[RMDB]
Source: RMDB library VIROID, as collected in RNAgym. This 177-nucleotide RNA was probed chemically with DMS. In probing experiments dimethyl sulfate is read out at A N1 and C N3, which are open when not base-paired.
RNA sequence: GGGAACGACUCGAGUAGAGUCGAAAAUUCCCGAUUCCGUCCAUCCCCCCCCCAGGAGGGUCGCCCAGGAAUGUCGGGAACUCCACUCUUCGGAGUCCGCGCUUCAUUCUUUCUUACCUGAUGGCCGCCUACUUUGUAUCUUCGGAUACAAAGUAGGAAAAGAAACAACAACAACAAC
Reactivity to DMS in 0.01 (KOAc 150mM, MgCl2 10mM, bicine 150mM(pH8.5), 24C), signal-to-noise 2, nucleotides 027 to 126: u000u000c000c000c000g010a150u000u000c120c020g020u000c030c020a070u010c040c010c000c010c000c010c020c030c030a030g010g010a090g010g000g010u000c050g020c000c000c020a050g000g000a030a000u000g000u010c010g000g010g010a050a030c010u000c010c000a140c160u000c170u010u000c090g000g000a040g000u000c020c010g010c050g000c280u010u000c010a020u000u000c020u000u000u000c100u010u010a110c090c070u010g000a090u000g010g010c080c050g010
The reactions ran in a buffer of 150 mM KOAc, 10 mM MgCl2 and 150 mM bicine (pH 8.5), at 24 C. Reactivities are given for positions 27 through 126. For DMS the reverse transcriptase was MarathonRT.